Source information: This 177-nucleotide RNA was probed chemically with 2A3 and DMS. The reactions ran in a buffer of 150 mM KOAc, 10 mM MgCl2 and 150 mM bicine (pH 8.5), at 24 C. The 2A3 profile rests on 3,953 reads. For DMS, 3,641 sequencing reads were counted. For DMS the reverse transcriptase was MarathonRT. It was measured as part of the RMDB library M2PK50.
[RMDB]
RNA sequence: GGGAACGACUCGAGUAGAGUCGAAAAACAACACGCUUCGGCGUGUUGUCGACGGAGGAAGCUGAGGACGCGCUAGUGCCGCAGCAGGGAAGCGCAGCGUAAAUCAGAGGUGAUUCGUCACCUCUAACAUUAUGCUUCCCUUCGGGGAAGCAUAAUGAAAAGAAACAACAACAACAAC
Reactivity to 2A3 in 0.01 (KOAc 150mM, MgCl2 10mM, bicine 150mM(pH8.5), 24C), signal-to-noise 3, nucleotides 027 to 126: a000c010a000a000c010a000c010g010c000u030u090c250g170g000c020g010u000g010u010u000g000u010c010g020a030c040g040g000a050g040g020a100a010g030c030u030g040a030g040g040a030c030g040c000g000c100u050a050g050u030g130c050c010g040c030a020g070c040a000g010g000g070a060a030g020c030g000c040a020g020c030g070u100a060a070a040u100c060a020g000a010g000g020u030g010a040u000u040c140g030u000c060a000c000c010u000c000u000a010a000
Reactivity to DMS in 0.01 (KOAc 150mM, MgCl2 10mM, bicine 150mM(pH8.5), 24C), signal-to-noise 3, nucleotides 027 to 126: a030c000a000a000c000a000c000g010c000u000u000c220g020g010c000g030u000g010u000u000g000u000c050g010a080c070g010g010a070g000g010a090a040g040c020u000g010a030g000g010a150c150g020c070g000c070u000a070g020u010g010c030c020g010c050a050g000c050a070g010g000g000a100a060g010c060g000c040a050g000c060g010u000a050a100a100u010c140a020g000a010g000g010u010g010a040u000u000c170g020u000c000a040c000c000u000c010u010a020a120